[RMDB]
Record summary:
An RNA of 177 nucleotides, treated with 2A3 and DMS and read out base by base. The data come from the RNA Mapping Database (RMDB), library OK2TRN. DMS adducts were read by reverse transcription with MarathonRT. The RNA was probed in 150 mM KOAc, 10 mM MgCl2 and 150 mM bicine (pH 8.5) at 24 C.

RNA sequence: GGGAACGACUCGAGUAGAGUCGAAAAGCACGGAGACAUGCACGGAAACGUAGACGGAGGCACCAUGACGAACGUGGCUGUCCGAGGCCUACGUAUUUGACUGGUAAUUCAGUCGUUAGGACAGCUAGACUAGCGUAGUGUUCGCACUACGCUAGUCAAAAGAAACAACAACAACAAC
Reactivity to 2A3 in 0.01 (KOAc 150mM, MgCl2 10mM, bicine 150mM(pH8.5), 24C), signal-to-noise 3, nucleotides 027 to 126: g040c020a000c090g030g040a070g000a060c030a060u070g010c020a010c050g040g050a110a090a010c030g020u030a010g020a020c020g030g010a030g050g030c010a000c030c020a030u060g060a060c120g060a300a000c040g050u040g040g000c100u000g000u000c010c000g010a050g050g090c000c000u020a000c010g030u040a110u090u040u120g010a010c000u010g020g030u130a080a090u190u090c010a000g020u010c010g030u080u070a010g010g020a020c020a020g000c000u040a050
Reactivity to DMS in 0.01 (KOAc 150mM, MgCl2 10mM, bicine 150mM(pH8.5), 24C), signal-to-noise 4, nucleotides 027 to 126: g030c040a030c080g000g000a110g000a100c070a100u000g010c000a080c060g010g010a070a060a050c070g010u000a080g030a060c060g020g010a250g000g020c030a030c080c040a060u000g000a150c130g010a070a080c110g020u000g000g010c060u000g000u010c000c010g010a300g020g020c050c000u000a040c070g010u010a060u000u010u000g000a020c020u010g000g020u000a140a120u000u010c010a030g000u000c000g020u020u000a100g000g000a050c030a020g010c030u000a150